[RMDB]
RNA sequence: GGGAACGACUCGAGUAGAGUCGAAAAUGACGUGCAGGUGUCACGCCUCAUUUUAGUGGCAGUAAGUCAAAAGUGGGUGCUCAACCUGUACAAGCCUACUUUAAGGAGACCACUAUGGCGCGGACUGGCCAUCGACCUACUUCGGUAGGUCGAUGGCAAAAGAAACAACAACAACAAC
Reactivity to 2A3 in 0.01 (KOAc 150mM, MgCl2 10mM, bicine 150mM(pH8.5), 24C), signal-to-noise 1, nucleotides 027 to 126: u040g080a020c000g000u000g080c000a000g050g030u020g020u040c090a000c180g000c030c000u070c070a160u000u000u070u110a180g090u040g000g000c110a050g030u300a170a000g000u190c010a030a000a000a000g000u000g000g000g010u150g110c030u020c150a000a000c070c030u030g000u130a000c030a010a020g010c000c000u030a020c050u060u090u030a140a020g010g000a010g000a130c000c000a000c030u110a210u170g010g000c070g000c000g000g040a090c020u060g030